RNA sequence: GGGAACGACUCGAGUAGAGUCGAAAAGAUAUGGAGAGUGAGUAGUUACCGAGGUUAGGGAGCGUUGUUUCGGAAACGAAAUGAAACGCUUUGAUCUAACUCGGUAACUACUCACUCUCCUAAGUCAGUUACAUUCCAGGUUCGCCUGGAAUGUAACAAAAGAAACAACAACAACAAC
Reactivity to DMS in 0.01 (KOAc 150mM, MgCl2 10mM, bicine 150mM(pH8.5), 24C), signal-to-noise 2, nucleotides 027 to 126: g000a030u000a300u010g010g000a020g000a030g000u010g020a020g010u000a010g000u000u000a000c000c000g010a020g020g020u000u000a020g000g000g000a020g030c000g020u000u000g010u000u000u010c000g000g000a140a100a300c000g010a010a020a010u000g010a130a030a010c020g010c000u000u000u000g000a070u010c000u010a000a030c010u000c000g010g010u000a000a000c000u000a000c000u010c020a000c000u000c000u000c000c000u010a010a050g010u000c060a170